[RMDB]
RNA sequence: GGGAACGACUCGAGUAGAGUCGAAAAGCAGCUGAGGUGAAGGUCCAGGAAGGUGCCUCUCUGACAAGCUCAAAGGUGGUGCCACCACCACUAUGGUUCCAAAGUUACACAGAGUAACACCGUGACCCUCAGUGAUGCGAUUCGUCGCAUCACUGAGAAAAGAAACAACAACAACAAC
Reactivity to 2A3 in 0.01 (KOAc 150mM, MgCl2 10mM, bicine 150mM(pH8.5), 24C), signal-to-noise 2, nucleotides 027 to 126: g010c030a030g010c020u000g010a030g040g050u080g060a230a000g050g010u050c050c080a060g120g060a100a090g000g060u060g050c020c000u000c000u000c000u000g010a040c040a090a060g010c040u040c090a050a050a000g090g010u030g000g000u020g060c060c040a100c020c000a000c000c000a000c050u110a130u110g080g020u060u090c020c030a050a110a000g010u040u050a010c120a010c040a000g100a020g180u020a020a000c000a000c010c010g100u120g070a060c000c000
Reactivity to DMS in 0.01 (KOAc 150mM, MgCl2 10mM, bicine 150mM(pH8.5), 24C), signal-to-noise 2, nucleotides 027 to 126: g010c030a040g000c000u000g010a130g020g050u000g010a130a100g000g000u000c050c070a130g010g010a120a070g010g040u000g010c020c030u000c000u010c020u000g000a120c170a060a100g000c080u000c050a040a150a100g000g020u000g000g000u010g000c110c130a150c180c050a030c030c030a060c050u010a070u010g000g020u010u010c070c030a030a130a100g010u000u000a130c030a090c170a100g000a170g000u000a000a050c010a090c090c060g000u000g020a090c190c010
Background: Conditions: 150 mM KOAc, 10 mM MgCl2 and 150 mM bicine (pH 8.5), 24 C. An RNA of 177 nucleotides, treated with 2A3 and DMS and read out base by base. Values cover nucleotides 27 to 126. For 2A3, 1,562 sequencing reads were counted. The data come from the RNA Mapping Database (RMDB), library OK2TST.